[RMDB]
Source information:
Structure probing data (DMS) for a 177-nucleotide construct. The RNA was probed in 150 mM KOAc, 10 mM MgCl2 and 150 mM bicine (pH 8.5) at 24 C.
RNA sequence: GGGAACGACUCGAGUAGAGUCGAAAAAUAUUAAUGCAUACGAACGGAUUUCCGAACUAAAAUUCGACGACUGGAUCGGCCCUGGCGCAUGAUGCACCGAACCGCACUACCCUCACCGCCCGUGGCCGUUGGGGUCAAAAUUCGUUUUGACCCCAACAAAAGAAACAACAACAACAAC
Reactivity to DMS in 0.01 (KOAc 150mM, MgCl2 10mM, bicine 150mM(pH8.5), 24C), signal-to-noise 1, nucleotides 027 to 126: a070u030a050u000u040a120a050u000g010c070a060u010a050c150g010a120a080c020g030g000a100u000u000u000c080c050g090a070a060c280u000a030a080a040a210u000u000c000g000a070c110g000a020c090u000g060g000a020u000c030g000g010c020c000c010u000g030g010c030g030c060a040u000g000a150u010g040c020a110c040c050g010a120a060c160c040g010c060a090c030u000a090c070c040c020u010c060a030c230c080g020c000c010c060g060u000g010g010c070c070